[RMDB]
RNA sequence: GGGAACGACUCGAGUAGAGUCGAAAAUCCAUGGGUCGGAACCUUAAAUUCGGAGGAUUCGUCCUUUAAACGUUCCUCCAAGGGUUCCUUCCCCGAUCCCUUACUUUCGUAAGUAUGGAACGGAGAGGAAAAUGAACAUCUUCGGAUGUUCAUUUUCAAAAGAAACAACAACAACAAC
Reactivity to DMS in 0.01 (KOAc 150mM, MgCl2 10mM, bicine 150mM(pH8.5), 24C), signal-to-noise 2, nucleotides 027 to 126: u000c000c000a150u010g020g000g020u000c140g010g010a010a000c000c000u020u010a210a030a180u000u000c060g000g000a020g000g000a010u010u000c000g030u000c060c120u020u000u020a070a130a010c020g000u010u000c000c000u010c010c000a040a010g000g000g000u000u000c010c010u000u000c010c000c000c100g010a080u000c030c010c010u000u000a030c020u000u020u010c190g020u020a040a030g020u000a030u010g010g010a060a100c080g010g010a150g010a160g010
Reactivity to 2A3 in 0.01 (KOAc 150mM, MgCl2 10mM, bicine 150mM(pH8.5), 24C), signal-to-noise 2, nucleotides 027 to 126: u000c010c010a040u090g000g030g040u020c020g010g010a000a000c000c000u070u000a070a090a070u090u140c300g000g000a020g040g010a030u140u090c020g010u060c060c000u100u110u210a130a110a010c000g000u020u010c020c000u000c000c010a010a010g000g000g000u000u030c000c000u030u010c000c000c000c000g020a040u040c010c000c040u050u050a030c040u110u100u250c080g110u140a040a040g000u030a100u210g000g040a070a050c090g040g060a120g020a050g190